About this RNA: Structure probing data (2A3) for a 207-nucleotide construct. Conditions: 150 mM KOAc, 10 mM MgCl2 and 150 mM bicine (pH 8.5), 24 C.
RNA sequence: GGGAACGACUCGAGUAGAGUCGAAAAGUCUGACCGACGCCGUCGCGGUUCGUGACGGGACGCGUUCCGUCGGCAACGACCGUUCCGUUCCAACGAAUAUAUGGUUUAGGCUUACCUAAUCCUCUCCAAUGAAGCUGACCAGGCGAGACGCGGUUGCCGCUAAGCGCUAAUUCGUUAGCGCUUAGCGAAAAGAAACAACAACAACAAC
Reactivity to 2A3 in 0.01 (KOAc 150mM, MgCl2 10mM, bicine 150mM(pH8.5), 24C), signal-to-noise 1, nucleotides 027 to 156: g060u030c080u040g030a000c030c000g020a090c000g010c020c110g120u110c060g000c010g030g070u050u080c000g000u000g060a090c040g000g000g000a000c000g000c120g010u080u080c070c030g030u060c010g050g070c040a110a010c010g000a060c000c030g000u000u030c080c000g000u000u070c030c000a080a040c060g010a010a000u060a000u030a070u180g010g080u010u050u140a000g000g000c020u040u180a220c010c020u000a060a150u090c000c000u050c000u000c060c150a130a190u220g050a100a050g020c010u000g050a080c010c010a070g050g000c000g000a060g000a010c030g010c000g110g000u020u080g010c000
Reactivities are given for positions 27 through 156. Source: RMDB library OK3TST, as collected in RNAgym.